[RMDB]
RNA sequence: GGGAACGACUCGAGUAGAGUCGAAAAUGGCGCUGUUCCGUCUGGGGUCAGACAGCGCGUCGCUGGUCGAUCAGUCUGCAAACGGCGCUGCUAUUCUGCAUGCUUACGUUCAGCACACCUUUGGCGGUAGUCUCUGAAGAUUCGUCUUCAGAGACUAAAAAGAAACAACAACAACAAC
Reactivity to 2A3 in 0.01 (KOAc 150mM, MgCl2 10mM, bicine 150mM(pH8.5), 24C), signal-to-noise 4, nucleotides 027 to 126: u070g020g000c010g000c010u020g030u070u030c020c010g020u020c030u040g080g020g020g020u080c040a040g020a080c010a020g010c040g000c030g050u020c050g000c010u070g030g050u040c010g020a220u040c010a020g060u030c040u060g010c040a020a040a050c060g030g000c130g030c120u090g000c000u060a110u160u060c050u040g010c020a020u110g010c010u070u070a040c030g030u040u050c010a010g000c030a020c010a030c030c020u080u070u090g040g000c030g000g020
Reactivity to DMS in 0.01 (KOAc 150mM, MgCl2 10mM, bicine 150mM(pH8.5), 24C), signal-to-noise 6, nucleotides 027 to 126: u010g010g010c010g000c010u010g000u000u000c090c040g000u000c040u000g010g000g010g020u020c090a090g010a080c090a020g010c030g020c120g010u000c080g020c030u000g010g000u000c080g000a080u010c100a050g010u000c070u000g020c080a050a050a040c070g010g010c100g020c070u010g010c040u000a120u000u000c100u010g000c050a040u010g010c030u000u010a140c060g010u000u000c050a060g010c030a100c140a100c020c020u000u000u000g010g000c030g000g010